RNA sequence: GGGAACGACUCGAGUAGAGUCGAAAACCACAAUAGGAUGGCAAAAGGGGACUCGGGUCCGUCGUUCCAUCCUUUUCUUACCUUUUGGCCGGCAUGGCCCCAGCCUCCUCGCUGGCGCCGGCUGGGCGCCAUUGGAAAUGUUCGCAUUUCCAAUGGCAAAAGAAACAACAACAACAAC
Reactivity to 2A3 in 0.01 (KOAc 150mM, MgCl2 10mM, bicine 150mM(pH8.5), 24C), signal-to-noise 4, nucleotides 027 to 126: c000c000a040c030a020a100u150a070g000g020a030u020g000g050c060a010a020a060a090g050g040g000g030a030c030u070c300g300g050g060u010c020c020g120u080c020g050u050u000c000c010a010u020c000c000u010u010u020u010c030u030u090a080c000c010u060u090u100u210g140g010c000c000g030g000c060a130u100g030g000c020c000c000c000a010g010c000c020u100c020c020u090c060g020c010u010g000g010c010g020c010c020g020g030c000u020g010g020g000c060
Reactivity to DMS in 0.01 (KOAc 150mM, MgCl2 10mM, bicine 150mM(pH8.5), 24C), signal-to-noise 5, nucleotides 027 to 126: c000c000a140c270a050a070u000a010g010g010a040u000g000g010c190a030a020a080a100g010g000g010g010a020c010u010c280g010g000g020u000c010c030g000u010c060g000u000u000c000c000a030u000c010c000u000u000u000u000c060u000u010a160c050c060u000u000u010u010g020g010c010c000g010g000c030a080u010g040g010c040c100c000c000a010g010c020c080u010c120c110u010c200g000c020u010g000g000c300g000c000c010g000g010c000u000g010g010g020c160